[RMDB]
Structure probing data (DMS and 2A3) for a 177-nucleotide construct. For DMS, 8,416 sequencing reads were counted. The 2A3 profile rests on 5,731 reads. 2A3 adducts were read by reverse transcription with SuperScript II with manganese. The RNA was probed in 150 mM KOAc, 10 mM MgCl2 and 150 mM bicine (pH 8.5) at 24 C.
RNA sequence: GGGAACGACUCGAGUAGAGUCGAAAACUGUAUCAUUGCUGCAUUGUGACAUUGAAAUUCCUCCAGGGUCCAAUCAAAGCUUACUAGAUCAACUAGCUAUCAAUUUAUCUCUGAUUGCCAUGCAUUCCUAUGUGGUUACAUUCGUGUAACCACAUAGAAAAGAAACAACAACAACAAC
Reactivity to DMS in 0.01 (KOAc 150mM, MgCl2 10mM, bicine 150mM(pH8.5), 24C), signal-to-noise 6, nucleotides 027 to 126: c070u000g010u000a080u000c040a070u010u000g010c040u000g010c110a060u010u010g020u000g010a070c050a050u010u010g000a040a100a160u000u010c050c010u000c040c050a070g000g000g010u000c050c030a040a050u010c080a050a100a100g010c080u010u000a060c060u000a070g000a100u000c110a050a100c050u000a040g010c070u000a060u000c040a040a060u010u000u000a060u010c060u000c050u000g000a060u000u000g010c030c040a050u010g020c120a100u000u000c070
Reactivity to 2A3 in 0.01 (KOAc 150mM, MgCl2 10mM, bicine 150mM(pH8.5), 24C), signal-to-noise 6, nucleotides 027 to 126: c020u040g070u110a100u120c040a070u080u150g030c030u030g010c010a060u070u100g050u090g070a060c030a070u060u130g080a180a220a110u150u050c020c010u030c040c020a030g070g000g000u000c030c010a000a040u070c040a080a050a060g030c010u050u060a060c020u060a050g090a180u090c020a060a120c030u030a000g030c010u040a030u140c040a060a070u040u150u140a120u050c050u000c010u050g040a120u020u070g010c020c010a030u070g020c020a060u060u070c010